[RMDB]
RNA sequence: GGGAACGACUCGAGUAGAGUCGAAAAAUCUCCUGACAAUCACUUCAGCCAAGGGGAGGAGCUUCCCAGUAAGGGGAGGUGCAACAACAAUGGUGGCGAUUUUGUCUGCAUCUCUUUGAUCAGAACCAGCAUCAGUGAUCAGAACACAGAUUUUUGACGUAAUAAUGACCUUCGGGUCAUUAUUACGAAAAGAAACAACAACAACAAC
Reactivity to DMS in 0.01 (KOAc 150mM, MgCl2 10mM, bicine 150mM(pH8.5), 24C), signal-to-noise 1, nucleotides 027 to 156: a130u000c000u010c000c070u000g040a100c030a080a070u000c060a060c070u020u000c070a230g000c040c050a070a100g040g010g020g030a070g020g010a140g040c050u000u000c020c000c020a200g000u000a100a120g040g030g010g000a040g040g020u000g000c030a130a050c030a050a090c070a070a030u010g010g030u000g020g010c030g020a130u010u000u000u000g000u010c120u010g050c040a040u000c000u010c020u000u000u000g010a070u000c030a110g010a070a130c040c010a190g000c010a030u000c030a060g030u010g020a080u000c050a080g000a130a060c100a080c070a140g020a240u000u000u010u020u000g000a300
Reactivity to 2A3 in 0.01 (KOAc 150mM, MgCl2 10mM, bicine 150mM(pH8.5), 24C), signal-to-noise 3, nucleotides 027 to 156: a000u020c030u020c000c030u030g010a030c080a060a110u130c020a070c090u120u060c100a040g030c070c030a080a090g020g000g000g010a020g000g000a010g010c020u030u020c000c010c000a020g070u130a030a100g040g030g000g000a000g000g000u000g000c010a040a040c000a010a010c010a020a100u100g040g060u070g110g000c070g060a050u030u000u070u070g040u060c170u020g000c000a020u000c010u010c040u040u040u070g040a020u050c020a000g030a070a080c050c010a030g040c030a060u040c020a050g040u010g040a020u040c020a000g050a070a020c060a010c030a110g040a130u090u080u000u080u130g080a030
Structure probing data (DMS and 2A3) for a 207-nucleotide construct. The DMS profile rests on 2,431 reads. The RNA was probed in 150 mM KOAc, 10 mM MgCl2 and 150 mM bicine (pH 8.5) at 24 C.